[RMDB]
RNA sequence: GGGAACGACUCGAGUAGAGUCGAAAAGACCGCUGAAUGCGGAAGUACUAGAUCAACUAGAAAGUAGAUGAAUACAAAAGCUACGUCUCGAAACUAGUUGAUCUAGUCCAUUCGAGACGUAGGAAGACACCACUAGGAGGUUCGCCUCCUAGUGGUGAAAAGAAACAACAACAACAAC
Reactivity to DMS in 0.01 (KOAc 150mM, MgCl2 10mM, bicine 150mM(pH8.5), 24C), signal-to-noise 3, nucleotides 027 to 126: g000a120c000c000g000c020u070g050a140a140u050g000c000g000g020a130a080g010u040a160c050u000a000g010a000u000c010a010a010c000u000a050g000a130a070a110g040u050a040g000a090u060g000a120a100u070a080c080a100a110a100a140g010c000u000a000c000g000u000c020u000c000g000a010a090a180c000u000a000g010u010u000g000a000u010c000u020a000g000u000c100c030a240u060u000c030g000a000g000a020c000g010u010a000g010g030a100a060g000a230
Reactivity to 2A3 in 0.01 (KOAc 150mM, MgCl2 10mM, bicine 150mM(pH8.5), 24C), signal-to-noise 5, nucleotides 027 to 126: g050a000c000c030g000c030u240g240a300a090u300g000c030g020g010a010a010g030u050a040c030u000a000g030a020u010c000a000a010c000u020a020g070a090a260a000g110u200a040g070a300u220g190a160a140u180a140c120a080a070a020a000g090c000u010a010c000g010u010c000u000c000g030a050a070a050c040u020a030g000u010u010g000a000u010c000u000a000g000u000c000c000a040u050u030c010g010a010g000a050c010g010u000a000g030g040a030a030g130a000